[RMDB]
The record gives the reactivity of an RNA of 207 nucleotides to 2A3. For 2A3 the reverse transcriptase was SuperScript II with manganese. High 2A3 reactivity points to a flexible backbone, as in loops and unpaired stretches. It was measured as part of the RMDB library M2RFPK.

RNA sequence: GGGAACGACUCGAGUAGAGUCGAAAAUAGCGAAGUAGGAUUUUAUGCGUCAAGUGUUCACAGGCUGGGGAGUCGCCGUGAAACGAAAAGCAGAAAGCGUGCUGCUUACGCUAUAAUUUCCGCACCCAUAAGAAGUCUCUGUUCGCAGAGACUUCAAGUAAUCUUCCAGCUUCGGCUGGAAGAUUACAAAAGAAACAACAACAACAAC
Reactivity to 2A3 in 0.01 (KOAc 150mM, MgCl2 10mM, bicine 150mM(pH8.5), 24C), signal-to-noise 2, nucleotides 027 to 156: u050a010g010c010g030a010a000g010u060a030g020g130a030u040u060u040u110a090u150g000c030g010u070c050a090a050g070u110g100u230u000c030a030c060a100g050g050c060u110g020g030g000g130a070g080u140c040g000c000c010g000u030g020a030a010a000c010g010a040a050a020a070g020c020a000g020a120a040a010g110c080g080u100g070c010u010g000c000u000u010a090c000g010c000u000a000u020a000a050u020u010u000c010c000g030c050a040c000c050c000a090u050a100a070g000a000a000g000u000c000u000c000u020g060u100u130c300g020c060a010g000a000g000a000c000u000u000c000a000a000